[RMDB]
RNA sequence: GGGAACGACUCGAGUAGAGUCGAAAAUCCCAAUAAACGAAUAACCAAUCAUUCCAUAGGUAACCUCGAGCUUUGGGAAGACAAAAAAAAUUUCAUGUCUGUGUUCUCGUUCCUUAAAUUAAUUAGACUUCUUGGACUUUUUGGAAGGUGGUUCUGACGAUUUAUGCUCAUUCGUGAGCAUAAAUCGAAAAGAAACAACAACAACAAC
Reactivity to 2A3 in 0.01 (KOAc 150mM, MgCl2 10mM, bicine 150mM(pH8.5), 24C), signal-to-noise 1, nucleotides 027 to 156: u000c000c020c000a000a150u120a040a040a000c130g070a010a000u090a050a050c010c010a000a100u050c080a180u080u030c070c000a040u080a070g000g020u060a100a040c010c000u010c010g010a000g010c050u060u260u270g040g020g000a040a030g040a000c060a000a070a040a020a010a090a040a130u130u200u160c070a100u170g080u030c030u000g040u030g050u120u110c050u000c010g070u000u000c000c030u050u040a080a170a110u090u090a060a170u050u050a000g030a070c010u100u080c000u170u020g050g010a030c000u060u120u040u060u040g050g020a030a050g050g030u040g000g000u040u030c040u110g020a010